[RMDB]
RNA sequence: GGGAACGACUCGAGUAGAGUCGAAAAGGAUUAUUCGUAAUCCGCAAAUUCCUAAGUCUCAGCGUUGAUCGACCGAACAGGCAACAGCUAUCGGAAACGAUAGACAUGCCUGACGGUCGGGAGCUGAGAUAUGGAUAGCCAUGUUCUUCGGAACAAAGAGUCUGCCUAUUUUCGAAUAGGCAGACUCAAAAGAAACAACAACAACAAC
Reactivity to 2A3 in 0.01 (KOAc 150mM, MgCl2 10mM, bicine 150mM(pH8.5), 24C), signal-to-noise 2, nucleotides 027 to 156: g010g000a030u040u040a030u080u190c190g050u080a010a020u000c000c000g060c020a150a150a030u120u020c020c000u070a130a030g020u000c000u010c000a010g000c030g130u200u050g040a030u000c000g000a000c000c010g080a190a100c000a000g000g000c010a030a010c020a210g020c000u000a000u000c000g080g050a170a070a050c000g000a000u000a010g040a040c020a030u110g000c000c000u000g010a010c000g010g020u000c010g000g000g000a000g000c000u000g010a000g000a000u000a000u040g000g010a010u020a060g060c000c060a090u130g030u000u000c030u000u040c140g060g030a020a030c000a050a110a110
Background: Structure probing data (2A3) for a 207-nucleotide construct. The reactions ran in a buffer of 150 mM KOAc, 10 mM MgCl2 and 150 mM bicine (pH 8.5), at 24 C. The 2A3 profile rests on 1,269 reads. For 2A3 the reverse transcriptase was SuperScript II with manganese.